This 207-nucleotide RNA was probed chemically with 2A3 and DMS.
Values are in units of 0.01, from 0 to 300, in steps of 10.
The RNA was probed in 150 mM KOAc, 10 mM MgCl2 and 150 mM bicine (pH 8.5) at 24 C.
The DMS profile rests on 1,702 reads.
DMS adducts were read by reverse transcription with MarathonRT.
RNA sequence: GGGAACGACUCGAGUAGAGUCGAAAAAGGGGUUCGCCCCUGUUUCUGGGGUCCUAACAGUUAAAAUGGAGGGACAUGCUCUGAAGCCUCCACGGAGCAACAGCCUACCCACCCAUCCGUUAGGACGGAGGCACCCUGUCAAGGCUUUCGAGCCUAAUCUUUUAUCCAAGUUCGCUUGGAUAAAAGAAAAAGAAACAACAACAACAAC
Reactivity to 2A3 in 0.01 (KOAc 150mM, MgCl2 10mM, bicine 150mM(pH8.5), 24C), signal-to-noise 2, nucleotides 027 to 156: a000g000g000g030g000u040u120c140g120c010c010c030c000u010g040u030u180u010c090u090g060g020g030g010u010c000c000u000a010a010c010a060g080u130u190a120a040a110a190u100g010g020a110g030g010g020a020c040a110u070g000c010u000c000u010g060a110a040g000c010c000u000c020c000a010c040g000g010a010g000c000a000a050c050a050g110c010c080u120a130c100c070c060a120c060c030c010a070u040c010c020g020u000u000a010g010g000a040c050g050g000a000g000g010c000a010c010c020c020u060g100u160c120a080a020g000g000c000u070u110u230c270g110a000g000c000c000u000a010a040
Reactivity to DMS in 0.01 (KOAc 150mM, MgCl2 10mM, bicine 150mM(pH8.5), 24C), signal-to-noise 1, nucleotides 027 to 156: a020g000g050g010g000u000u000c190g000c000c000c000c000u000g050u000u000u020c040u000g020g010g030g030u000c000c000u000a030a090c020a120g000u000u000a020a090a120a100u000g030g000a280g000g010g000a090c030a230u010g030c040u000c000u020g000a090a210g060c010c000u010c010c010a300c050g000g010a060g040c030a030a050c110a160g020c040c020u000a230c050c050c100a210c090c020c080a140u000c050c000g020u000u000a010g000g000a100c010g000g000a060g010g060c020a070c020c000c020u000g000u010c070a110a210g020g000c000u000u010u000c220g050a120g030c010c010u000a030a070